This 177-nucleotide RNA was probed chemically with DMS and 2A3. The RNA was probed in 150 mM KOAc, 10 mM MgCl2 and 150 mM bicine (pH 8.5) at 24 C.
[RMDB]
RNA sequence: GGGAACGACUCGAGUAGAGUCGAAAAAGUAAUGCCCAGGCUGCUUCCCUGAUAAUUGCGCUGUGUUUCCGUAUGAAAUACAGGCAACCGACACUCUGCGCCUCUUUGAGCUGACGAUAACCGUGAGACCACAUUCGAGAUUCGUCUCGAAUGUGGUAAAAGAAACAACAACAACAAC
Reactivity to DMS in 0.01 (KOAc 150mM, MgCl2 10mM, bicine 150mM(pH8.5), 24C), signal-to-noise 2, nucleotides 027 to 126: a090g030u000a040a050u010g010c040c000c010a080g020g000c020u010g010c040u000u000c030c000c040u000g010a120u010a060a100u010u000g010c000g010c010u020g020u000g010u000u000u000c000c300g030u000a080u070g000a000a040a000u000a010c000a010g020g020c050a040a030c140c030g000a060c100a050c030u000c020u010g020c050g000c020c020u000c080u040u000u020g020a030g000c000u000g000a020c050g000a100u010a110a120c050c030g040u020g000a130g020
Reactivity to 2A3 in 0.01 (KOAc 150mM, MgCl2 10mM, bicine 150mM(pH8.5), 24C), signal-to-noise 4, nucleotides 027 to 126: a020g200u170a100a030u180g000c000c000c020a010g030g010c020u020g020c010u020u000c010c010c000u030g040a040u070a270a110u060u020g000c300g010c010u000g010u000g040u030u030u000c070c160g100u190a100u300g020a000a020a020u040a000c000a000g020g010c010a000a000c030c040g050a010c000a000c050u040c020u070g000c000g060c000c030u060c030u030u070u080g060a060g000c000u040g010a040c030g040a050u030a100a020c010c010g030u010g030a050g040